[RMDB]
RNA sequence: GGGAACGACUCGAGUAGAGUCGAAAAGACUUUUAGGUUUAUUGCUGUAAUGUGUGAGACCCUCAGCUACGGCGACUGGGGACUAUAAGUUUCAGGAAGGAGGGGGCUAUAACAGGUCUGUGAUGCCGAAAAAGAAGGUGUUCGCACCUUCUUUUUCAAAAGAAACAACAACAACAAC
Reactivity to DMS in 0.01 (KOAc 150mM, MgCl2 10mM, bicine 150mM(pH8.5), 24C), signal-to-noise 1, nucleotides 027 to 126: g020a070c020u000u000u000u010a080g040g010u000u010u010a060u010u000g000c020u000g020u010a070a080u000g040u010g020u030g020a090g000a100c110c020c020u000c000a110g000c020u000a080c110g020g000c060g020a100c080u000g020g000g000g000a080c070u010a080u000a110a070g020u000u000u000c060a050g010g010a090a090g000g010a110g000g000g000g000g010c080u000a080u000a030a070c100a080g020g000u000c040u010g010u000g030a100u020g030c100c080

The data come from the RNA Mapping Database (RMDB), library RFMREP. Chemical mapping of a 177-nucleotide RNA with DMS. The reactions ran in a buffer of 150 mM KOAc, 10 mM MgCl2 and 150 mM bicine (pH 8.5), at 24 C. Values cover nucleotides 27 to 126.